About this RNA
Structure probing data (2A3 and DMS) for a 177-nucleotide construct. The data come from the RNA Mapping Database (RMDB), library TTRDEL. Reactivities are given for positions 27 through 126. For DMS, 2,522 sequencing reads were counted. For 2A3, 6,184 sequencing reads were counted. As a SHAPE reagent, 2A3 marks flexible, mostly unpaired nucleotides at the ribose 2'-OH. 2A3 adducts were read by reverse transcription with SuperScript II with manganese. Values are in units of 0.01, from 0 to 300, in steps of 10. Conditions: 150 mM KOAc, 10 mM MgCl2 and 150 mM bicine (pH 8.5), 24 C. DMS adducts were read by reverse transcription with MarathonRT.
RNA sequence: GGGAACGACUCGAGUAGAGUCGAAAAGAUAUGGAGUCCGACACUCUAUGAAGUAUGCUAAUCUCGGAAACGAGACAACAUAUGGAGAGUGAGGACUCCUAAGUCAAAAGAGCCGUUCGCGGCUCAAGUUUUACUUUACGUUCGCGUAAAGUAAAACAAAAGAAACAACAACAACAAC
Reactivity to 2A3 in 0.01 (KOAc 150mM, MgCl2 10mM, bicine 150mM(pH8.5), 24C), signal-to-noise 4, nucleotides 027 to 126: g010a000u040a010u100g010g000a000g000u020c000c030g180a230c050a010c010u020c000u040a300u240g000a020a000g010u010a000u010g020c080u140a260a190u130c010u010c010g030g000a020a030a010c010g000a010g030a020c020a110a050c000a020u000a000u040g010g000a000g000a000g010u000g020a040g000g000a000c000u000c000c000u000a010a000g000u000c010a030a020a080a240g010a000g000c040c020g010u050u060c300g000c030g140g000c000u000c000a010a000
Reactivity to DMS in 0.01 (KOAc 150mM, MgCl2 10mM, bicine 150mM(pH8.5), 24C), signal-to-noise 4, nucleotides 027 to 126: g010a030u000a300u000g000g000a020g020u000c020c010g000a240c040a000c000u000c000u000a240u010g010a110a230g010u000a000u010g010c110u010a120a280u000c000u000c010g000g010a100a060a170c000g000a000g020a040c080a090a140c010a000u000a010u000g010g020a010g010a010g030u000g000a300g000g000a000c000u000c000c000u000a010a090g000u000c020a120a090a090a250g000a020g010c010c010g040u010u010c150g030c020g000g000c000u000c010a020a050